[RMDB]
RNA sequence: GGGAACGACUCGAGUAGAGUCGAAAAGAUAUGGAUGGAGCUCCCUGGCUUGUUAUAUCGGAAACGAUAUAGCAAGCCCUGGAGCGUUGAAAUCCUAAGUCAAAAGGACCACCUUCGGGUGGUCCAACAAACAAAUAUUGUUCGCAAUAUUUGUUUGAAAAGAAACAACAACAACAAC
Reactivity to 2A3 in 0.01 (KOAc 150mM, MgCl2 10mM, bicine 150mM(pH8.5), 24C), signal-to-noise 1, nucleotides 027 to 126: g020a010u080a020u190g010g000a010u010g020g030a020g000c010u000c020c010c000u010g000g010c010u020u000g000u010u000a000u010a000u010c020g010g000a050a040a040c000g010a000u000a000u000a000g000c000a000a000g000c000c010c000u010g000g000a010g000c000g010u040u000g000a020a010a000u010c000c000u000a150a020g090u070c030a010a020a050a190g000g000a010c010c000a010c030c020u090u150c300g060g000g000u000g000g000u000c000c000a000a010
Reactivity to DMS in 0.01 (KOAc 150mM, MgCl2 10mM, bicine 150mM(pH8.5), 24C), signal-to-noise 5, nucleotides 027 to 126: g000a030u000a300u000g000g010a010u000g010g000a180g010c000u000c010c010c040u000g020g020c000u000u000g010u000u000a000u000a000u000c000g000g000a120a080a210c000g010a010u000a000u000a010g000c000a010a000g000c000c000c020u000g000g000a020g020c000g000u000u010g000a100a150a030u000c000c000u000a080a200g010u010c040a080a080a150a150g020g000a010c000c000a000c000c000u000u010c200g030g010g030u000g000g010u000c010c000a010a070